[RMDB]
RNA sequence: GGGAACGACUCGAGUAGAGUCGAAAAAACGAGACGGAGCUCUCGAUCUAGACCCAGAGAGAAGGAGAUGCGUCUUCUUUUUGUAUGCAUGCAGCCAGUCGAUGUCUUUCGCUUGGGGCAUUUUGUGCCUGAUCCUACGAUUCGUCGUAGGAUCAGGAAAAGAAACAACAACAACAAC
Reactivity to DMS in 0.01 (KOAc 150mM, MgCl2 10mM, bicine 150mM(pH8.5), 24C), signal-to-noise 3, nucleotides 027 to 126: a090a040c060g000a020g000a020c010g020g020a180g020c150u000c000u000c020g000a120u020c030u000a120g000a200c050c060c020a140g000a120g010a020g000a090a050g000g000a040g000a030u000g010c120g010u000c010u000u000c050u000u000u000u000u000g020u000a080u000g020c170a030u000g010c050a040g010c030c020a060g010u000c020g000a040u000g010u020c120u000u010u000c050g010c050u000u010g010g010g020g000c040a030u000u000u010u020g030u010g000
Reactivity to 2A3 in 0.01 (KOAc 150mM, MgCl2 10mM, bicine 150mM(pH8.5), 24C), signal-to-noise 2, nucleotides 027 to 126: a000a000c040g000a000g040a010c080g270g120a110g050c030u000c000u000c010g000a020u010c000u050a050g120a160c020c000c040a020g020a000g010a010g010a080a030g020g010a030g000a060u070g060c110g110u000c000u040u000c000u010u070u050u030u060g150u070a120u170g040c050a010u060g000c000a020g170c030c020a020g000u050c040g050a010u050g170u110c000u000u140u020c000g010c050u030u080g020g040g000g040c020a020u060u110u090u200g100u060g070

An RNA of 177 nucleotides, treated with DMS and 2A3 and read out base by base. It was measured as part of the RMDB library OK2TST. 2A3 adducts were read by reverse transcription with SuperScript II with manganese. For DMS, 2,735 sequencing reads were counted. The reactions ran in a buffer of 150 mM KOAc, 10 mM MgCl2 and 150 mM bicine (pH 8.5), at 24 C.